Conditions: 150 mM KOAc, 10 mM MgCl2 and 150 mM bicine (pH 8.5), 24 C. The record gives the reactivity of an RNA of 177 nucleotides to DMS and 2A3.
[RMDB]
RNA sequence: GGGAACGACUCGAGUAGAGUCGAAAAGUCGGGGCGACGACGACCGCCGCGACCUGUCGCGGGUGGAGAUCGACUCCGCCGGCAGCGUCGAUUUCCGCGACGGCUCCAUCACCCUCGCCAGCGGUGAGAAAAUGGCCUAUUUCGAUAGGCCAUUUUCAAAAGAAACAACAACAACAAC
Reactivity to DMS in 0.01 (KOAc 150mM, MgCl2 10mM, bicine 150mM(pH8.5), 24C), signal-to-noise 3, nucleotides 027 to 126: g040u000c000g000g010g000g010c050g000a210c020g010a060c100g010a180c080c020g010c020c020g000c000g010a020c030c070u010g000u000c000g000c030g010g020g030u000g050g010a040g000a110u010c050g000a070c020u000c030c040g000c060c040g000g010c040a130g010c180g000u000c010g000a090u000u000u000c030c000g010c020g010a040c030g000g010c040u000c020c030a170u000c090a100c050c010c020u000c070g000c040c030a060g010c080g000g000u010g010a120
Reactivity to 2A3 in 0.01 (KOAc 150mM, MgCl2 10mM, bicine 150mM(pH8.5), 24C), signal-to-noise 1, nucleotides 027 to 126: g010u030c030g000g060g000g100c010g000a060c060g030a040c040g130a100c040c010g030c010c000g170c010g040a000c000c030u100g030u020c020g000c150g080g010g010u170g060g080a080g000a060u080c010g030a050c030u020c020c050g110c010c000g060g090c030a040g050c010g000u000c000g000a040u020u030u060c010c040g040c030g030a060c000g020g020c000u050c030c010a050u070c030a050c000c000c000u050c040g080c020c000a010g020c020g010g030u010g000a110
Source: RMDB library OK2TST, as collected in RNAgym. The 2A3 profile rests on 1,815 reads.